[RMDB]
RNA sequence: GGGAACGACUCGAGUAGAGUCGAAAAAUAAAAUACCUAACAAUUCCACUGAUGAGAUUGACCGUCGAUGUCCCGAACUCUUGUGCCGUUCGUUCAAGUGCUGUUCCUUCGAUGACAGUCGGGAUAUUGAGCUGUAACAAGAGGCGUGUGGUUAUUCCACCUUCAGAGAAUUCGUUCUCUGAAGGUGAAAAGAAACAACAACAACAAC
Reactivity to DMS in 0.01 (KOAc 150mM, MgCl2 10mM, bicine 150mM(pH8.5), 24C), signal-to-noise 1, nucleotides 027 to 156: a080u010a080a060a070a170u000a180c010c010u010a080a140c060a100a130u000u000c030c000a170c070u010g000a150u000g000a100g000a110u010u020g030a080c060c060g060u000c030g000a100u010g020u000c000c060c000g000a010a040c010u010c030u000u000g020u000g020c020c070g020u000u000c040g000u000u000c070a110a060g070u000g000c040u000g050u000u000c060c110u010u000c110g050a190u000g000a040c060a060g000u000c070g040g000g000a080u010a090u020u000g010a050g020c000u000g070u000a070a070c050a070a040g010a080g000g020c130g030u000g010u020g000g010u000u000a210u000u000c040
Reactivity to 2A3 in 0.01 (KOAc 150mM, MgCl2 10mM, bicine 150mM(pH8.5), 24C), signal-to-noise 1, nucleotides 027 to 156: a000u120a020a100a010a030u090a060c020c020u060a120a050c040a070a100u110u040c010c000a050c090u070g040a080u080g040a090g050a120u090u100g030a050c050c010g070u060c030g020a030u070g010u000c010c000c010g070a120a100c010u010c020u050u020g020u010g000c010c080g070u030u050c010g020u050u020c060a090a030g010u110g090c000u000g040u130u110c060c010u100u220c070g110a150u220g000a010c010a020g000u010c030g000g080g000a010u030a060u080u120g020a020g020c010u000g010u070a130a040c020a010a010g000a000g010g020c040g020u090g010u020g000g040u070u080a060u230u000c010
Structure probing data (DMS and 2A3) for a 207-nucleotide construct.
For 2A3 the reverse transcriptase was SuperScript II with manganese.
2A3 is a SHAPE reagent: it acylates the 2'-hydroxyl of flexible nucleotides of all four kinds.
The 2A3 profile rests on 1,353 reads.
In probing experiments dimethyl sulfate is read out at A N1 and C N3, which are open when not base-paired.
The data come from the RNA Mapping Database (RMDB), library OK3TST.
Reactivities are rounded to 0.1 and cut off at 0 and 3.
The reactions ran in a buffer of 150 mM KOAc, 10 mM MgCl2 and 150 mM bicine (pH 8.5), at 24 C.